[RMDB]
Chemical mapping of a 177-nucleotide RNA with 2A3. Source: RMDB library RFM100, as collected in RNAgym. For 2A3 the reverse transcriptase was SuperScript II with manganese. Conditions: 150 mM KOAc, 10 mM MgCl2 and 150 mM bicine (pH 8.5), 24 C.
RNA sequence: GGGAACGACUCGAGUAGAGUCGAAAAGAACCUUUGUGGCUCCUCUGCCGAUCCAUACUGCGGAACUCCUAGCCGCUUGUUUUGCUCGCAGCCGGUCUGGAGCAAAGCUCAUCGGAACUGACAAUUCACGCACGUGCACAUUCGUGUGCACGUGCGUAAAAGAAACAACAACAACAAC
Reactivity to 2A3 in 0.01 (KOAc 150mM, MgCl2 10mM, bicine 150mM(pH8.5), 24C), signal-to-noise 1, nucleotides 027 to 126: g010a050a040c000c050u120u040u190g090u070g000g000c000u070c030c000u040c030u030g000c050c000g000a020u000c000c000a080u040a090c020u110g000c010g030g000a040a020c030u000c080c030u010a040g000c020c000g000c000u000u050g030u000u000u000u020g000c000u000c070g300c020a010g000c000c010g220g070u300c020u040g000g000a000g000c000a020a020a020g000c000u000c000a030u050c070g030g000a060a060c010u110g020a020c020a040a060u040u000c110